[RMDB]
RNA sequence: GGGAACGACUCGAGUAGAGUCGAAAAUAGGUUGAAUUCGUUCAACCUACAGGCAAGCAAGCAGCGCAACGAGACAAGGCGAUUAUAAGAUAGCGCAUGCUGAUACAUCGGUCUUCGGACCGAUGAAAGUAAUAUCGCUCUUCGGAGCGAUAUUACUAAAAGAAACAACAACAACAAC
Reactivity to 2A3 in 0.01 (KOAc 150mM, MgCl2 10mM, bicine 150mM(pH8.5), 24C), signal-to-noise 2, nucleotides 027 to 126: u050a000g000g000u000u010g020a000a020u100u060c150g040u080u010c000a020a000c010c000u010a050c000a010g080g070c090a040a060g000c010a040a000g000c040a010g000c020g000c010a010a070c040g010a030g040a090c090a070a070g100g040c040g020a050u150u080a160u130a150a040g050a120u120a060g060c010g000c040a030u030g020c010u060g050a040u020a230c000a010u030c010g000g000u070c000u000u060c270g110g000a010c000c000g000a000u000g000a010a010
Reactivity to DMS in 0.01 (KOAc 150mM, MgCl2 10mM, bicine 150mM(pH8.5), 24C), signal-to-noise 2, nucleotides 027 to 126: u000a000g010g020u010u000g000a000a050u010u020c170g020u000u000c000a030a000c000c000u000a010c100a030g040g000c090a110a100g010c140a130a030g020c030a040g000c010g000c030a090a140c080g000a090g010a080c180a060a080g010g000c040g000a080u000u000a060u010a120a130g000a140u010a090g000c020g000c000a070u000g010c010u000g000a110u000a170c030a000u000c000g010g010u010c000u000u030c180g010g020a040c000c000g000a000u000g030a030a050